[RMDB]
RNA sequence: GGGAACGACUCGAGUAGAGUCGAAAAGCGCGCAGACGCACGACUCGUUGAGCUGUCGUCGAUGAUCGCGUCAAUAGUUGAGGCGAAACCUGGACCAAGUGACCUGAGCAGCGUCUUGAGAUUUAAGGAUCCGUACGGGUUUCGACCCGUACGGAUCAAAAGAAACAACAACAACAAC
Reactivity to 2A3 in 0.01 (KOAc 150mM, MgCl2 10mM, bicine 150mM(pH8.5), 24C), signal-to-noise 1, nucleotides 027 to 126: g000c000g020c020g040c080a030g040a070c050g020c000a080c040g180a200c020u020c110g140u180u170g090a020g040c000u040g090u180c100g020u040c000g000a130u070g000a010u000c010g020c020g060u050c010a030a020u090a150g300u090u020g000a010g000g040c080g000a070a000a000c020c020u040g030g000a020c000c000a070a000g010u010g100a120c000c000u020g050a020g100c040a010g020c010g020u000c000u020u100g130a090g000a060u120u220u260a060a100g130
Reactivity to DMS in 0.01 (KOAc 150mM, MgCl2 10mM, bicine 150mM(pH8.5), 24C), signal-to-noise 1, nucleotides 027 to 126: g000c050g030c000g000c090a070g000a030c010g040c220a020c020g000a130c010u000c000g030u020u020g010a140g040c040u010g010u000c020g000u000c110g000a090u000g000a130u000c010g000c070g020u000c030a080a160u010a250g010u000u000g000a000g050g010c000g000a020a130a140c040c010u010g010g000a090c060c070a130a040g000u010g000a140c190c030u000g000a060g030c020a110g010c090g030u000c000u000u000g000a100g010a120u030u000u010a140a050g000